Source: RMDB library 15KLIB, as collected in RNAgym. Structure probing data (DMS) for a 170-nucleotide construct. Reactivities are rounded to 0.1 and cut off at 0 and 3. DMS adducts were read by reverse transcription with MarathonRT. The DMS profile rests on 8,166 reads. The RNA was probed in 150 mM KOAc, 10 mM MgCl2 and 150 mM bicine (pH 8.5) at 24 C.
[RMDB]
RNA sequence: GGGAACGACUCGAGUAGAGUCGAAAAUUGAAGGUAAAACAGCCUGUGGGUGAAACACACCCACAGGGCCCAUUGGGCGCUAGCACUCUGGUAUCACGGUACCUUUGUGCGCCUGGUUUACCGAAGGAGGCAGGGGCGUUCGCGCCCCUGAAAAGAAACAACAACAACAAC
Reactivity to DMS in 0.01 (KOAc 150mM, MgCl2 10mM, bicine 150mM(pH8.5), 24C), signal-to-noise 1, nucleotides 027 to 129: u030u040g030a100a100g020g020u000a040a010a020a000c050a000g020c030c000u000g020u000g020g080g000u010g050a130a210a180c220a010c060a000c030c050c000a000c020a030g000g010g020c020c000c020a010u000u080g000g020g010c000g040c020u000a050g030c010a000c030u040c030u030g030g010u000a000u030c020a140c280g070g000u020a010c000c020u000u010u010g010u000g030c020g040c050c000u000g010g000u000u000u000a010c010c010g010a070a010g030g020a100g000g040